[RMDB]
RNA sequence: GGGAACGACUCGAGUAGAGUCGAAAAUUCUUCCAGGUUUUAGUAUAGCCUGAGUGACCUCUAGGAGUCCUUGGACCUGAGCUAACUCCUGUACAAUUUUGGCCGGUUGUCUGGUUAAUAAAUUAACGGAGGAUGAGUACUUCGGUACUCAUUCUCUAAAAGAAACAACAACAACAAC
Reactivity to DMS in 0.01 (KOAc 150mM, MgCl2 10mM, bicine 150mM(pH8.5), 24C), signal-to-noise 6, nucleotides 027 to 126: u000u020c060u000u020c120c010a030g000g010u000u000u000u020a070g010u030a100u030a060g000c090c010u010g010a060g000u030g020a040c080c020u010c090u020a090g010g010a100g000u010c030c020u010u000g010g000a050c120c040u010g010a120g020c030u010a030a050c040u010c010c000u000g000u020a070c300a060a060u020u010u000u010g010g010c020c020g000g000u000u010g010u010c080u010g000g000u000u020a050a050u020a050a060a120u020u010a060a100c150
Reactivity to 2A3 in 0.01 (KOAc 150mM, MgCl2 10mM, bicine 150mM(pH8.5), 24C), signal-to-noise 5, nucleotides 027 to 126: u020u000c010u140u050c020c010a010g040g010u010u030u050u110a050g030u070a060u140a080g000c010c020u020g010a020g010u140g040a020c000c020u040c070u110a090g080g080a060g050u020c000c000u010u030g030g020a030c010c010u050g060a010g020c010u010a020a000c010u020c000c000u020g020u070a060c070a110a140u040u080u050u120g040g010c010c010g050g000u090u130g040u050c060u010g050g000u020u010a060a020u080a090a120a070u190u080a050a010c100